Source information
Chemical mapping of a 177-nucleotide RNA with 2A3 and DMS.
[RMDB]
RNA sequence: GGGAACGACUCGAGUAGAGUCGAAAAAGAUGUAAAAAAGGAAAACAUUGGGCUAGUCAAUGUCGUUCUAAAUUUGAUAAAAAUGGGCAACCAUUGUCGGGAAACGAGCAAAGGGGCCAGCCUCAGGAUACCCUACACCCUUCGGGGUGUAGGGUAUAAAAGAAACAACAACAACAAC
Reactivity to 2A3 in 0.01 (KOAc 150mM, MgCl2 10mM, bicine 150mM(pH8.5), 24C), signal-to-noise 1, nucleotides 027 to 126: a020g100a090u180g080u270a110a020a000a000a000a000g060g000a020a020a020a020c000a030u060u140g040g000g020c000u000a050g120u000c000a000a120u020g020u080c000g020u000u000c020u000a110a160a140u300u300u300g090a180u300a070a130a000a000a000u000g000g080g000c000a000a000c000c000a000u000u000g000u000c080g080g000g000a000a000a150c000g060a060g170c090a000a020a130g000g000g000g030c000c000a000g000c020c010u000c050a010g090g000
Reactivity to DMS in 0.01 (KOAc 150mM, MgCl2 10mM, bicine 150mM(pH8.5), 24C), signal-to-noise 1, nucleotides 027 to 126: a090g050a170u090g030u100a070a010a100a070a020a120g040g000a080a000a050a000c000a090u000u010g010g010g040c100u000a060g010u010c020a020a040u040g010u000c180g020u040u000c060u080a000a140a080u000u010u000g010a090u000a000a100a030a080a030u010g000g010g030c130a100a120c020c000a000u000u000g010u020c060g000g030g000a070a040a120c060g000a090g000c110a040a160a090g120g030g030g000c010c150a020g000c030c060u010c140a090g000g000
About this RNA: For 2A3, 344 sequencing reads were counted.